[RMDB]
RNA sequence: GGGAACGACUCGAGUAGAGUCGAAAAAUAAAGAGCGUAAACGCGUCAUUCAGUGACGUGAAGAUCAUCCAAGUGUGCUGUCUACAGUCGUAGAUAGCGCACAUUACGCUAAGAUGAUCAUAAAAAACCUCUAUGCUCUGUUCGCAGAGCAUAGAGGAAAAGAAACAACAACAACAAC
Reactivity to 2A3 in 0.01 (KOAc 150mM, MgCl2 10mM, bicine 150mM(pH8.5), 24C), signal-to-noise 2, nucleotides 027 to 126: a020u270a000a140a010g050a010g020c040g040u030a040a060a050c050g000c010g000u000c000a000u280u110c080a070g190u020g010a020c000g000u000g060a060a010g000a010u010c000a000u000c010c060a080a140g010u010g000u000g020c000u000g000u000c010u000a040c050a260g180u280c150g000u080a010g000a000u000a000g030c000g040c010a000c020a000u000u020a000c020g000c020u020a000a030g010a000u000g000a010u060c020a030u250a040a180a000a000a010a000
Reactivity to DMS in 0.01 (KOAc 150mM, MgCl2 10mM, bicine 150mM(pH8.5), 24C), signal-to-noise 2, nucleotides 027 to 126: a110u010a060a090a120g010a090g000c010g000u000a010a120a210c060g010c010g000u000c000a030u000u010c300a120g010u000g010a000c000g020u010g000a030a100g010a000u000c010a010u010c010c050a050a130g000u000g000u000g000c010u000g020u000c020u000a010c020a160g000u000c210g000u000a000g020a000u000a000g010c000g010c010a000c000a040u000u000a050c050g000c020u000a080a100g000a030u010g000a000u000c000a130u030a000a000a060a090a090a050

Chemical mapping of a 177-nucleotide RNA with 2A3 and DMS. For DMS the reverse transcriptase was MarathonRT. For 2A3 the reverse transcriptase was SuperScript II with manganese. The DMS profile rests on 1,206 reads.